[RMDB]
RNA sequence: GGGAACGACUCGAGUAGAGUCGAAAAAAUAACCAAACUGGCUGAUGUUGAAGCGGACGUCGCAGCACGUGCUGAUGACGAAGGCUUCAUCACAUUAAAGAACAAUCUAUAUAGAUUGGUUUGGCAUAGAGGUCCACGUUCGCGUGGACCAAAAGAAACAACAACAACAAC
Reactivity to 2A3 in 0.01 (KOAc 150mM, MgCl2 10mM, bicine 150mM(pH8.5), 24C), signal-to-noise 3, nucleotides 027 to 129: a000a000u190a030a070c000c000a000a000a010c040u020g100g010c010u000g050a080u000g070u050u020g000a010a000g010c000g040g150a020c000g000u000c000g000c000a000g000c010a010c260g210u210g000c000u020g000a240u050g000a000c000g000a090a020g000g000c000u000u000c000a000u020c050a000c020a000u060u080a050a100a030g030a000a000c000a020a000u010c030u030a130u030a060u190a280g000a010u010u000g000g020u000u000u000g000g000c010a060u080a080g070a040
Reactivity to DMS in 0.01 (KOAc 150mM, MgCl2 10mM, bicine 150mM(pH8.5), 24C), signal-to-noise 2, nucleotides 027 to 129: a040a050u070a100a080c000c050a000a000a000c120u000g010g000c110u040g020a040u020g000u050u000g010a000a000g010c010g000g050a300c000g000u060c010g020c000a030g010c000a260c300g050u120g090c020u040g000a040u050g000a000c000g030a030a230g010g000c000u000u010c000a000u060c010a000c000a030u000u130a140a000a010g080a110a130c060a010a010u000c000u020a090u050a110u110a000g000a070u000u000g000g010u000u030u000g000g000c130a030u010a030g050a090
Source: RMDB library 15KLIB, as collected in RNAgym. Structure probing data (2A3 and DMS) for a 170-nucleotide construct. For 2A3, 4,575 sequencing reads were counted. 2A3 adducts were read by reverse transcription with SuperScript II with manganese. The reactions ran in a buffer of 150 mM KOAc, 10 mM MgCl2 and 150 mM bicine (pH 8.5), at 24 C.